[RMDB]
RNA sequence: GGGAACGACUCGAGUAGAGUCGAAAACCGAGAAGCUUCGGCUUCUCGGAAAUAAAGUGCGAAAUAAAUGAGGAAACUGAACUGCAAAGCACAAGCAGAAAAAAACCGUCUUGUUCGCAAGACGGAACUAUACUCGAGAGUUCGCUCUCGAGUAUAGAAAAGAAACAACAACAACAAC
Reactivity to DMS in 0.01 (KOAc 150mM, MgCl2 10mM, bicine 150mM(pH8.5), 24C), signal-to-noise 2, nucleotides 027 to 126: c000c000g000a010g000a010a010g040c000u000u020c190g020g000c000u000u000c000u010c000g000g000a000a030a040u010a010a170a110g040u000g030c020g010a100a040a110u020a040a090a110u000g010a110g010g000a080a100a080c090u010g030a040a100c010u000g040c020a040a070a110g000c010a020c060a070a130g000c010a000g000a010a000a070a090a010a080a100c000c000g000u000c000u000u000g000u010u020c190g010c000a030a000g000a010c000g000g010a000a010
Reactivity to 2A3 in 0.01 (KOAc 150mM, MgCl2 10mM, bicine 150mM(pH8.5), 24C), signal-to-noise 2, nucleotides 027 to 126: c000c000g000a000g010a000a000g010c030u110u140c240g080g000c000u000u000c050u010c000g000g030a000a010a010u060a000a050a000g020u010g020c050g140a180a110a030u190a020a140a080u230g040a100g100g070a150a090a030c120u110g050a050a080c000u000g030c010a020a080a060g000c000a000c040a070a020g030c020a020g130a080a050a020a000a000a000a030c000c000g020u030c000u000u040g030u030u080c160g020c080a000a000g000a010c030g010g000a000a000
Chemical mapping of a 177-nucleotide RNA with DMS and 2A3. Source: RMDB library M2PK50, as collected in RNAgym. For 2A3, 1,927 sequencing reads were counted.